RNA sequence: GGGAACGACUCGAGUAGAGUCGAAAAGGGGAGCUUCGACGAUCUCUUGUCUCUCCUGAAGGAGGAAGGAGCUCUCGAACGCUCUCCCGACCGCUCGGAUGGGCCGCUUCCGGCAAGAGGGGCCGAAGUCUCUUUUUAGGUUCGCCUAAAAAGAGACAAAAGAAACAACAACAACAAC
Reactivity to DMS in 0.01 (KOAc 150mM, MgCl2 10mM, bicine 150mM(pH8.5), 24C), signal-to-noise 1, nucleotides 027 to 126: g020g010g010g060a020g030c030u000u010c000g000a010c130g010a050u000c000u000c010u000u010g000u010c040u010c000u000c000c040u020g040a150a200g020g010a040g010g020a180a050g000g000a010g000c150u010c000u000c000g000a000a050c180g000c010u000c010u000c000c030c000g000a220c020c050g010c100u010c040g020g000a120u000g000g010g000c000c010g020c050u010u000c010c000g050g040c090a050a110g020a110g010g010g000g010c080c030g000a070a070
Reactivity to 2A3 in 0.01 (KOAc 150mM, MgCl2 10mM, bicine 150mM(pH8.5), 24C), signal-to-noise 1, nucleotides 027 to 126: g000g020g000g010a000g010c000u000u020c020g030a050c110g000a000u000c010u010c020u020u030g290u040c030u040c010u020c110c020u080g180a220a170g000g000a000g000g000a000a010g000g000a020g010c000u000c010u000c000g000a010a010c110g010c010u020c010u020c000c010c000g020a030c020c020g040c020u040c000g090g030a070u110g070g000g050c060c000g090c130u060u020c040c000g030g000c040a070a020g020a030g110g030g000g000c000c010g010a030a020
Conditions: 150 mM KOAc, 10 mM MgCl2 and 150 mM bicine (pH 8.5), 24 C.
Structure probing data (DMS and 2A3) for a 177-nucleotide construct.
Reactivities are rounded to 0.1 and cut off at 0 and 3.
The 2A3 profile rests on 1,370 reads.
It was measured as part of the RMDB library 15KREP.
2A3 adducts were read by reverse transcription with SuperScript II with manganese.